[RMDB]
The data come from the RNA Mapping Database (RMDB), library M2PK50.
The record gives the reactivity of an RNA of 177 nucleotides to DMS and 2A3.
RNA sequence: GGGAACGACUCGAGUAGAGUCGAAAAGCUCAUUACUUCGGUAAUGAGCAAAUAAAUUCAGCGGUAAAAGCACCGCAAAUAUUACCGCUGAUGCGGAGCUUAAAACAGCUAGGUUCGCCUAGCUGAAACUUUUGACAAUGUUCGCAUUGUCAAAAGUAAAAGAAACAACAACAACAAC
Reactivity to DMS in 0.01 (KOAc 150mM, MgCl2 10mM, bicine 150mM(pH8.5), 24C), signal-to-noise 3, nucleotides 027 to 126: g010c000u020c000a010u000u000a000c000u010u010c210g020g000u010a000a000u010g010a010g000c000a010a020a010u000a060a080a060u000u000c000a040g010c000g000g000u000a000a060a130a150g010c110a100c130c150g030c110a050a040a080u010a070u000u000a030c000c010g020c000u000g000a030u010g030c140g000g000a070g020c080u000u010a030a070a130a190c030a020g000c000u000a000g010g000u010u000c300g010c000c000u000a000g000c000u000g000a010a030
Reactivity to 2A3 in 0.01 (KOAc 150mM, MgCl2 10mM, bicine 150mM(pH8.5), 24C), signal-to-noise 2, nucleotides 027 to 126: g000c000u010c000a000u010u010a010c000u010u060c190g080g000u000a010a000u000g000a000g000c000a000a010a020u020a010a060a020u080u010c010a010g000c000g000g010u010a010a060a020a060g040c050a120c070c060g020c070a050a070a010u110a000u010u010a000c000c000g010c010u010g010a000u030g000c050g080g110a120g030c020u090u140a000a070a050a130c000a000g000c000u000a000g000g050u030u030c130g060c050c000u000a000g000c000u000g000a000a000
Overview:
For 2A3 the reverse transcriptase was SuperScript II with manganese.